[RMDB]
RNA sequence: GGGAACGACUCGAGUAGAGUCGAAAACCACCACCUCCGAAACGCAUUGCAUUAGAUGUUGGUACACGUCCCUUUGCAGAUAUCGAGCUGAAUGUGUUUAGAGAACCACAUUUUGACUCAAAUGUCAAUCCACGGAAAAUUUCGAUUUUCCGUGGAUAAAAGAAACAACAACAACAAC
Reactivity to DMS in 0.01 (KOAc 150mM, MgCl2 10mM, bicine 150mM(pH8.5), 24C), signal-to-noise 4, nucleotides 027 to 126: c020c020a200c110c070a130c070c020u010c040c030g020a070a080a110c100g010c040a100u000u000g010c040a070u010u010a100g000a040u000g030u000u000g010g020u000a060c110a070c110g010u000c010c010c020u000u000u000g000c080a120g000a050u000a040u010c190g000a030g020c040u010g010a010a010u000g000u000g000u010u010u020a160g020a150g020a090a110c200c010a020c030a010u000u000u000u010g000a090c000u000c020a040a080a090u000g020u010c040a110
Reactivity to 2A3 in 0.01 (KOAc 150mM, MgCl2 10mM, bicine 150mM(pH8.5), 24C), signal-to-noise 4, nucleotides 027 to 126: c010c000a000c020c010a020c010c040u070c010c040g070a060a060a030c060g010c030a050u040u100g000c020a050u030u110a030g030a070u080g000u100u060g070g010u060a040c060a010c080g070u040c020c000c000u040u070u100g050c040a020g020a060u050a050u190c090g000a010g000c020u020g000a010a010u010g040u000g040u030u090u080a110g020a010g030a040a010c020c010a010c010a040u020u060u040u060g140a190c010u000c030a070a120a050u050g020u010c000a020